[RMDB]
RNA sequence: GGGAACGACUCGAGUAGAGUCGAAAAGUGAGCGCUCUUGUCUACAAUAAUAAAUUGUUAGCCAAGAAGGAGCUUUCAGGCCAGUGCUUUAAAAUACUCUAUAAGGGCAAUGUGACGCAUGAUGCUACGAGAUCGUGGUUCGCCACGAUCAAAAGAAACAACAACAACAAC
Reactivity to DMS in 0.01 (KOAc 150mM, MgCl2 10mM, bicine 150mM(pH8.5), 24C), signal-to-noise 5, nucleotides 027 to 129: g000u030g030a000g000c040g000c060u050c000u020u010g000u020c000u040a010c030a020a060u040a110a120u000a040a070a030u000u000g000u000u040a020g020c050c000a010a010g040a070a050g020g040a140g040c000u000u000u000c120a050g010g020c030c060a120g010u030g010c020u020u010u030a050a070a050a070u030a120c000u010c030u040a100u040a130a160g000g000g000c050a030a020u030g000u000g000a000c050g010c080a080u000g030a180u020g030c000u000a100c130g000a140
Reactivity to 2A3 in 0.01 (KOAc 150mM, MgCl2 10mM, bicine 150mM(pH8.5), 24C), signal-to-noise 6, nucleotides 027 to 129: g120u070g000a030g000c010g020c030u010c000u000u000g000u000c000u000a000c020a000a050u160a110a010u200a180a210a040u030u030g050u110u120a000g000c000c000a000a000g020a020a030g060g040a020g000c000u020u060u050c060a040g060g000c010c010a010g020u020g030c000u020u040u050a030a070a030a000u110a070c020u000c020u060a070u050a240a170g020g000g030c010a040a040u070g010u050g050a030c040g020c010a020u060g030a050u080g030c020u020a040c040g030a020